This 177-nucleotide RNA was probed chemically with 2A3 and DMS. For 2A3, 2,215 sequencing reads were counted. For DMS the reverse transcriptase was MarathonRT.
RNA sequence: GGGAACGACUCGAGUAGAGUCGAAAACAGUGGAUCACAAGACUUAAAUUUCGCUUGUUCUUGAGAAACUCCAUUUAAAAGCAUUCAGAACUUAAGUAACAGUCAAGGUAGCAUGAAAAGCAUAAGCGUACAGCGUUAUCUUCGGAUAACGCUGUACAAAAGAAACAACAACAACAAC
Reactivity to 2A3 in 0.01 (KOAc 150mM, MgCl2 10mM, bicine 150mM(pH8.5), 24C), signal-to-noise 4, nucleotides 027 to 126: c030a010g060u030g010g060a110u120c080a050c060a120a040g030a010c010u100u170a050a050a130u170u260u070c040g030c100u030u080g050u150u020c010u080u140g030a070g070a080a040a000c040u020c050c000a070u080u170u160a130a300a070a030g000c020a030u100u130c050a000g010a070a000c010u050u060a050a020g040u030a010a110c050a090g030u040c020a040a020g030g040u020a020g030c070a050u100g090a080a060a060a030g000c050a090u060a200a000g110c020
Reactivity to DMS in 0.01 (KOAc 150mM, MgCl2 10mM, bicine 150mM(pH8.5), 24C), signal-to-noise 2, nucleotides 027 to 126: c070a160g010u060g000g000a050u000c040a080c060a040a060g000a040c100u010u070a010a110a110u000u030u010c300g010c000u000u020g010u050u030c120u000u000g010a040g010a080a080a200c050u000c040c040a180u080u050u000a030a080a030a120g030c160a100u050u000c000a050g030a090a030c030u000u000a030a010g030u000a010a060c140a020g000u010c010a040a110g040g060u000a160g000c060a020u000g030a250a060a060a120g020c090a110u030a030a060g000c060